Structure probing data (DMS and 2A3) for a 207-nucleotide construct. The reactions ran in a buffer of 150 mM KOAc, 10 mM MgCl2 and 150 mM bicine (pH 8.5), at 24 C. High DMS reactivity at an A or C suggests that its Watson-Crick edge is free. For 2A3 the reverse transcriptase was SuperScript II with manganese.
[RMDB]
RNA sequence: GGGAACGACUCGAGUAGAGUCGAAAAAGGGUGUUGUUUAUCGCUAUGGCUCUUUUAUCACUACGGUUGUCGCUAAUGAUUUCUAGGGAGCGGAGACACAAGAACUUAAACUCUAUACCUAUAUGAUAGCUUAGCGGAUAACCCUUAUAUAGAUUGGCAAAAAUACCAUCUUCGGAUGGUAUUUUUGAAAAGAAACAACAACAACAAC
Reactivity to DMS in 0.01 (KOAc 150mM, MgCl2 10mM, bicine 150mM(pH8.5), 24C), signal-to-noise 2, nucleotides 027 to 156: a040g000g020g020u010g020u000u010g030u000u000u000a150u020c030g010c040u000a080u000g020g000c020u000c000u030u000u000u010a040u020c070a090c020u000a060c050g020g020u000u000g010u010c020g000c050u000a070a120u020g020a110u010u000u000c040u020a110g030g010g000a050g000c020g010g020a140g030a130c070a250c100a090a190g020a070a130c050u000u000a120a170a050c000u020c020u030a120u030a080c070c020u000a090u000a100u000g010a100u000a020g010c060u000u000a040g020c030g030g020a130u000a050a060c020c000c010u000u000a060u000a080u000a050g010a150u020u020g010g020
Reactivity to 2A3 in 0.01 (KOAc 150mM, MgCl2 10mM, bicine 150mM(pH8.5), 24C), signal-to-noise 2, nucleotides 027 to 156: a010g100g010g010u030g000u000u060g000u020u050u040a080u080c040g010c120u020a030u100g060g000c010u000c000u040u140u000u050a060u090c050a030c060u090a030c060g050g000u010u010g040u030c000g000c020u020a090a040u110g020a150u020u100u090c020u040a010g030g000g000a020g070c110g030g020a000g020a010c070a000c010a200a040g080a160a040c060u100u100a090a070a010c000u000c020u010a060u080a210c000c020u060a060u000a010u300g030a010u040a010g070c030u000u000a000g000c030g030g050a010u030a000a000c030c000c000u060u080a050u000a000u000a140g180a130u020u090g040g030